[RMDB]
RNA sequence: GGGAACGACUCGAGUAGAGUCGAAAAGAUAUGGAGUUAGAACUACGCAGAACGACUUCGUUGAAAUCGGAAACGAUGGAGAAGUCAAUGCGCUAACUCCUAAGUCAAAGAUACGUUCGCGUAUCAAUCAUUAUACCGUGUUCGCACGGUAUAAUGAAAAAGAAACAACAACAACAAC
Reactivity to 2A3 in 0.01 (KOAc 150mM, MgCl2 10mM, bicine 150mM(pH8.5), 24C), signal-to-noise 6, nucleotides 027 to 126: g040a010u070a030u140g000g000a000g000u000u010a020g020a150a110c170u190a050c300g000c020a020g080a290a050c120g010a030c030u020u000c020g160u220u080g040a090a080a010u000c000g000g030a050a040a030c010g000a010u020g020g000a050g000a020a000g000u000c000a010a030u010g000c020g000c000u000a000a000c000u000c010c000u010a040a010g000u000c050a120a030a110g000a010u010a000c000g040u050u130c300g000c010g170u020a010u040c020a020a110
Reactivity to DMS in 0.01 (KOAc 150mM, MgCl2 10mM, bicine 150mM(pH8.5), 24C), signal-to-noise 7, nucleotides 027 to 126: g010a030u000a300u000g010g010a020g010u000u010a000g000a130a060c130u030a300c030g020c000a030g010a140a180c260g000a010c000u000u000c000g010u000u010g020a110a120a020u000c000g010g000a090a080a160c010g000a000u010g000g000a100g000a030a010g000u000c010a050a140u000g000c020g010c000u000a000a010c010u000c000c000u000a010a080g000u000c040a090a100a120g000a010u010a010c010g010u010u010c230g020c000g000u000a000u000c010a100a130

The record gives the reactivity of an RNA of 177 nucleotides to 2A3 and DMS. DMS adducts were read by reverse transcription with MarathonRT. For 2A3 the reverse transcriptase was SuperScript II with manganese.